Annotation
The record gives the reactivity of an RNA of 177 nucleotides to 2A3 and DMS. The DMS profile rests on 844 reads. For 2A3 the reverse transcriptase was SuperScript II with manganese. The data come from the RNA Mapping Database (RMDB), library M2PK50. For DMS the reverse transcriptase was MarathonRT. Reactivities are given for positions 27 through 126.
[RMDB]
RNA sequence: GGGAACGACUCGAGUAGAGUCGAAAAUCUACUCCCUUCGGGGAGUAGAAAAUAAACUUGACGAAUGCCGGUGAAGAAAAACGGCAUUCUAAGAUUGCCGAAAAAGGAACUCCUUCGGGAGUUCCAAUCUCAAUGAAAUGUUCGCAUUUCAUUGAGAAAAAGAAACAACAACAACAAC
Reactivity to 2A3 in 0.01 (KOAc 150mM, MgCl2 10mM, bicine 150mM(pH8.5), 24C), signal-to-noise 1, nucleotides 027 to 126: u000c000u000a000c000u000c010c020c100u000u060c200g010g000g000g010a000g000u000a030g000a000a000a000a000u010a000a020a010c000u010u030g060a010c020g010a020a000u010g030c000c010g000g090u150g090a270a300g130a300a220a070a080a030c000g010g000c010a000u010u000c000u010a000a020g010a030u010u090g120c020c000g110a120a110a040a050a070g020g010a000a000c000u000c020c000u060u080c200g100g000g000a000g000u000u000c000c000a000a000
Reactivity to DMS in 0.01 (KOAc 150mM, MgCl2 10mM, bicine 150mM(pH8.5), 24C), signal-to-noise 1, nucleotides 027 to 126: u000c000u010a000c000u000c000c020c000u000u000c210g030g000g000g040a000g040u010a040g000a000a010a090a080u020a070a070a070c000u000u000g000a240c200g010a010a010u000g000c020c020g000g010u000g030a120a120g000a030a030a030a190a020c010g020g000c000a000u000u000c010u000a070a090g000a080u000u000g020c060c000g000a020a030a060a160a100g000g000a010a000c000u000c000c000u000u000c190g020g010g000a040g000u000u000c000c000a030a020